[RMDB]
The record gives the reactivity of an RNA of 177 nucleotides to 2A3 and DMS. The 2A3 profile rests on 4,118 reads. The DMS profile rests on 7,356 reads.
RNA sequence: GGGAACGACUCGAGUAGAGUCGAAAAGUGCGACAUUUCGAUGUCGCACAAACCCAAAUGGUGCCACCUAACUAAACAAGCCGGGAAAAGCCAGAUGCCAACGUCCUUAGCCCUUCGGGGCUAAGAAUUGAUAAUACCGAUUCGUCGGUAUUAUCAAAAAAGAAACAACAACAACAAC
Reactivity to 2A3 in 0.01 (KOAc 150mM, MgCl2 10mM, bicine 150mM(pH8.5), 24C), signal-to-noise 1, nucleotides 027 to 126: g000u010g000c000g010a000c020a000u060u070u140c240g100a020u020g020u010c020g020c000a000c000a010a000a000c010c000c010a040a060a020u110g020g010u040g020c020c000a040c010c010u060a100a100c030u100a160a050a100c030a120a000g030c050c020g010g000g050a010a080a050a020g010c010c020a040g010a080u100g040c030c020a060a020c060g050u090c010c010u000u000a000g000c000c000c000u030u020c220g040g000g020g000c000u000a000a000g000a000a010
Reactivity to DMS in 0.01 (KOAc 150mM, MgCl2 10mM, bicine 150mM(pH8.5), 24C), signal-to-noise 6, nucleotides 027 to 126: g000u000g010c000g010a020c010a010u000u000u010c140g020a030u000g010u000c000g010c000a000c010a000a080a100c010c000c010a090a080a080u000g010g020u000g000c030c070a070c040c040u010a070a100c070u010a060a100a110c100a070a070g010c020c030g030g000g000a050a060a080a120g000c030c020a050g000a080u000g010c050c050a050a080c130g000u000c060c000u000u000a000g000c000c000c000u000u010c170g020g000g000g010c000u000a000a010g000a040a070